[RMDB]
RNA sequence: GGGAACGACUCGAGUAGAGUCGAAAACAUGAAAAUUCUGGGUGACUUUUUGUGACUAAAGUCCCAUUGUAAGCCACAUUCUUUGUCCAGCAGUGCUCACUGACUGCUGAAAUAAAUGUUCAUUUGCCUUAUUCUUUACCUUCGGGUAAAGAAUAAGAAAAGAAACAACAACAACAAC
Reactivity to 2A3 in 0.01 (KOAc 150mM, MgCl2 10mM, bicine 150mM(pH8.5), 24C), signal-to-noise 2, nucleotides 027 to 126: c010a040u060g000a010a050a030a070u140u070c140u210g240g060g090u100g020a010c020u040u060u050u060u060g060u050g080a030c030u090a030a020a030g070u040c000c000c000a000u000u190g020u070a040a040g020c010c020a020c000a020u070u010c030u100u100u110g060u080c030c000a000g000c000a000g000u050g140c030u090c140a180c080u150g030a000c000u010g000c000u000g000a010a000a000u070a000a010a020u080g010u040u070c040a090u030u010u140g030c010
Reactivity to DMS in 0.01 (KOAc 150mM, MgCl2 10mM, bicine 150mM(pH8.5), 24C), signal-to-noise 3, nucleotides 027 to 126: c070a050u000g000a060a080a040a040u000u000c060u010g010g000g010u000g000a030c050u000u000u000u000u010g020u000g020a070c110u010a070a100a140g010u010c010c020c000a080u010u000g000u010a090a060g010c050c030a020c020a040u010u000c060u000u000u000g010u000c090c000a020g000c010a000g000u000g010c080u000c190a090c180u010g000a030c020u000g010c010u000g010a020a050a050u010a030a050a070u000g000u000u010c100a110u000u010u000g010c240